[RMDB]
RNA sequence: GGGAACGACUCGAGUAGAGUCGAAAAUUUACGGUAUUCGUACCGUAAACGAGCAAGCAAGCAGCGCAACGAGACAAGACGAUAAUAAGAACGAGCAUGCUGAUAGUAGGAUCUUCGGAUCCUACAACACCACACAUGUUUUCGAACAUGUGUGGUGAAAAGAAACAACAACAACAAC
Reactivity to 2A3 in 0.01 (KOAc 150mM, MgCl2 10mM, bicine 150mM(pH8.5), 24C), signal-to-noise 3, nucleotides 027 to 126: u000u000u000a010c000g000g020u020a060u000u080c170g020u040a030c010c000g000u000a000a000a010c040g000a040g070c050a100a020g000c000a030a010g000c030a010g030c010g000c090a030a070c060g060a010g020a070c050a070a030g050a040c060g050a050u050a160a020u100a190a070g080a090a050c090g000a030g030c040a030u070g010c030u060g030a070u050a100g010u000a000g000g000a000u000c000u020u010c130g040g000a000u000c010c000u000a000c000a000a000
Reactivity to DMS in 0.01 (KOAc 150mM, MgCl2 10mM, bicine 150mM(pH8.5), 24C), signal-to-noise 3, nucleotides 027 to 126: u000u000u000a000c000g000g010u010a010u000u000c220g010u000a010c000c000g000u000a000a010a050c110g000a100g000c060a060a080g020c060a090a070g010c020a040g000c090g000c070a040a040c030g020a050g010a070c080a040a060g010a080c070g000a050u010a060a040u000a070a060g010a080a060c060g020a070g020c020a030u010g000c060u000g010a080u010a100g010u000a000g000g000a010u010c000u000u000c210g040g010a000u010c000c000u000a000c010a090a150
The record gives the reactivity of an RNA of 177 nucleotides to 2A3 and DMS. The data come from the RNA Mapping Database (RMDB), library M2PK50. For DMS the reverse transcriptase was MarathonRT. Values cover nucleotides 27 to 126. Conditions: 150 mM KOAc, 10 mM MgCl2 and 150 mM bicine (pH 8.5), 24 C. For DMS, 2,490 sequencing reads were counted.